[RMDB]
This 177-nucleotide RNA was probed chemically with DMS. Source: RMDB library RFMREP, as collected in RNAgym.
RNA sequence: GGGAACGACUCGAGUAGAGUCGAAAAUGCACCCGGGUAAGUCCUAUACGGCCAGCUCCCUUCGAAUCCUCCAGGGCUUGAUCGCAGCAAAGGUAGUUGGUUGUAGCGGCGCGAUAUAGUAAGCUUACUACCUUUUGGAGUUCGCUCCAAAAGGUAGAAAAGAAACAACAACAACAAC
Reactivity to DMS in 0.01 (KOAc 150mM, MgCl2 10mM, bicine 150mM(pH8.5), 24C), signal-to-noise 1, nucleotides 027 to 126: u000g010c230a140c000c000c060g000g010g010u000a030a010g030u000c020c010u000a140u010a000c050g000g010c010c010a040g010c010u010c050c020c040u000u000c070g000a070a090u000c030c030u000c110c030a100g000g020g000c050u060u000g020a070u030c160g020c110a060g010c030a050a120a030g010g000u010a030g000u000u000g020g000u020u000g030u000a010g010c120g000g010c020g010c040g000a170u000a040u020a060g000u040a040a070g020c050u000u000a110